[RMDB]
The record gives the reactivity of an RNA of 207 nucleotides to DMS and 2A3. The reactions ran in a buffer of 150 mM KOAc, 10 mM MgCl2 and 150 mM bicine (pH 8.5), at 24 C. For DMS the reverse transcriptase was MarathonRT. It was measured as part of the RMDB library RNAMAK. For 2A3, 2,267 sequencing reads were counted.

RNA sequence: GGGAACGACUCGAGUAGAGUCGAAAAGAUCCUUCGGGAUCAAUCAACCGUAGGAGUGUUAAAUGGCGAUACGUUUGACGUCCACUUCGAAAGAGGUGGACCGAGUAUCGAACUACCAUUACACACUCCUAAACGGCAAAGGCCUCUUCGGAGGCAAGUACAGAAGUGGGUUCGCCCACUUCUGUACAAAAGAAACAACAACAACAAC
Reactivity to DMS in 0.01 (KOAc 150mM, MgCl2 10mM, bicine 150mM(pH8.5), 24C), signal-to-noise 1, nucleotides 027 to 156: g000a010u000c000c000u000u000c290g040g030g010a040u000c000a030a130u010c030a120a000c000c000g030u010a010g050g000a020g040u000g040u010u000a250a090a090u000g000g020c000g020a000u000a040c000g000u000u010u010g010a240c200g030u000c000c000a030c000u010u000c000g000a190a060a300g000a060g080g020u000g020g000a020c000c000g030a100g010u000a000u000c040g060a080a100c010u020a110c010c000a020u000u000a190c150a070c020a030c000u020c000c000u020a010a020a090c000g000g000c000a050a060a160g030g030c000c000u010c010u000u000c230g060g000a040g060g040c000a030a020
Reactivity to 2A3 in 0.01 (KOAc 150mM, MgCl2 10mM, bicine 150mM(pH8.5), 24C), signal-to-noise 2, nucleotides 027 to 156: g000a000u000c000c010u030u070c280g080g000g020a010u020c000a000a040u130c010a020a040c000c010g020u020a000g000g010a000g000u010g030u030u080a130a140a010u000g000g020c000g010a010u010a000c030g110u020u200u210g150a090c090g010u000c000c000a000c000u000u000c010g020a060a040a010g000a000g000g000u000g000g020a000c010c000g020a010g010u000a000u010c000g010a020a020c050u110a060c020c000a000u010u010a030c040a010c000a000c020u000c000c000u000a010a000a000c000g030g030c080a130a090a140g150g020c030c050u050c010u070u160c290g080g000a000g000g000c000a000a010